[RMDB]
RNA sequence: GGGAACGACUCGAGUAGAGUCGAAAAUGUCAAAAUAGACUAGUCUAGGAGACGAUAAAUCCUAUGUGGGUGAGUCCCACUCUGGCGAGACACGCAGUGCCUUUUAUUUGUUUGAGGUUAUCAAACAGUGCGCUCACAUAUUCGUAUGUGAGCGCACAAAAGAAACAACAACAACAAC
Reactivity to 2A3 in 0.01 (KOAc 150mM, MgCl2 10mM, bicine 150mM(pH8.5), 24C), signal-to-noise 2, nucleotides 027 to 126: u120g000u000c020a000a000a100a300u140a090g010a000c020u010a010g030u000c010u000a010g000g010a010g010a010c020g000a000u040a060a040a010u000c010c000u010a030u030g000u000g000g040g020u040g040a020g030u050c020c010c000a020c010u030c030u020g020g020c000g020a000g020a010c030a010c110g020c030a040g160u100g010c000c000u020u030u020u040a130u110u150u110g010u000u000u010g000a000g040g030u180u180a070u000c010a010a010a010c020a020
Reactivity to DMS in 0.01 (KOAc 150mM, MgCl2 10mM, bicine 150mM(pH8.5), 24C), signal-to-noise 1, nucleotides 027 to 126: u000g020u000c030a060a060a300a110u000a100g000a050c000u000a280g000u010c000u000a090g000g010a220g020a000c010g010a180u030a060a010a070u000c000c000u000a060u000g040u000g000g010g000u020g000a300g020u000c000c000c000a010c000u000c000u000g020g030c000g000a000g010a020c210a020c020g010c000a190g010u040g000c050c000u000u000u000u000a100u010u020u000g020u000u000u000g000a010g010g010u000u010a060u000c000a020a000a000c000a040
Chemical mapping of a 177-nucleotide RNA with 2A3 and DMS. For DMS, 871 sequencing reads were counted. The RNA was probed in 150 mM KOAc, 10 mM MgCl2 and 150 mM bicine (pH 8.5) at 24 C. For DMS the reverse transcriptase was MarathonRT.